RNA sequence: GGGAACGACUCGAGUAGAGUCGAAAAGACGUGGAGGUUUCGCGCCCUCCUUUGCGCGUAAGUACGUCGAAAUUCGGUGCUUUGGAUCGCACCGUUCGAUCCAUUUGAUAUCCGCUUCGUGCCGCGGUUGGGCAUUUACACUUACCCGAAAGGGGAAAUCAUAAAUCCGUUUCGACGGAUUUAUGAUAAAAGAAACAACAACAACAAC
Reactivity to DMS in 0.01 (KOAc 150mM, MgCl2 10mM, bicine 150mM(pH8.5), 24C), signal-to-noise 2, nucleotides 027 to 156: g000a040c030g000u000g020g010a090g000g010u010u010u000c060g030c050g020c120c030c040u000c030c070u000u010u010g010c020g020c050g020u000a070a090g000u010a040c070g030u000c050g010a060a040a120u010u010c030g050g030u000g030c010u000u000u050g010g010a080u010c070g000c030a290c120c110g000u000u000c010g010a030u000c030c020a120u010u000u010g010a090u010a100u000c030c010g010c110u010u010c020g010u010g030c020c070g020c070g020g010u000u010g000g020g020c030a110u000u010u000a080c090a070c070u010u000a180c010c010c000g000a100a150a120g010g020g000g000a040a080
Reactivity to 2A3 in 0.01 (KOAc 150mM, MgCl2 10mM, bicine 150mM(pH8.5), 24C), signal-to-noise 4, nucleotides 027 to 156: g110a010c070g010u050g040g070a090g080g020u050u100u090c030g000c010g020c030c010c020u060c010c030u030u080u130g050c020g000c000g020u030a080a100g030u050a030c020g020u010c030g050a060a040a110u210u110c050g010g000u020g020c010u080u050u090g010g040a030u070c020g010c080a150c100c020g000u080u040c010g010a010u000c020c020a050u020u040u130g110a100u060a070u110c020c000g010c020u000u020c020g010u010g000c020c010g020c020g040g000u090u040g030g000g000c010a020u040u040u150a040c050a000c010u070u110a060c000c010c000g040a070a040a050g000g010g000g010a000a100
Notes
This 207-nucleotide RNA was probed chemically with DMS and 2A3. For DMS the reverse transcriptase was MarathonRT. The reactions ran in a buffer of 150 mM KOAc, 10 mM MgCl2 and 150 mM bicine (pH 8.5), at 24 C. High DMS reactivity at an A or C suggests that its Watson-Crick edge is free. The 2A3 profile rests on 2,617 reads.